[RMDB]
RNA sequence: GGGAACGACUCGAGUAGAGUCGAAAAAUUAAGGGCAAGUGGAUAUGUUCAGAAAUACUUUGCCAACACUAAGGAAGAGGAAAUGUUAUUAGGAAUAGCAAAAAGCCUAGAAAAUUUCAUGAUAUUGUAGAUAAGGAUGGUUCGCCAUCCUUAUCUAAAAAGAAACAACAACAACAAC
Reactivity to 2A3 in 0.01 (KOAc 150mM, MgCl2 10mM, bicine 150mM(pH8.5), 24C), signal-to-noise 1, nucleotides 027 to 126: a000u030u030a020a140g110g000g020c020a020a000g030u050g010g060a050u100a040u230g100u130u200c020a060g080a030a120a020u100a020c000u160u140u020g000c020c020a040a080c060a060c060u080a150a000g050g000a020a030g070a030g040g130a000a050a050u120g020u080u020a140u040u000a030g080g000a090a090u050a000g100c000a070a230a170a060a000g060c030c030u020a020g120a020a210a040a090u070u100u150c050a080u020g100a050u030a050u120u300g050
Reactivity to DMS in 0.01 (KOAc 150mM, MgCl2 10mM, bicine 150mM(pH8.5), 24C), signal-to-noise 3, nucleotides 027 to 126: a070u000u000a100a140g010g010g000c020a050a070g010u010g000g010a230u000a080u000g000u000u030c170a130g010a110a040a150u010a090c010u000u000u000g000c020c020a110a120c150a120c170u030a060a110g000g000a080a090g000a150g010g000a030a050a050u000g000u000u000a070u010u000a050g000g000a080a060u000a110g010c110a040a070a090a120a100g010c040c010u000a020g000a060a040a050a090u010u000u000c040a050u000g000a090u000a090u000u000g010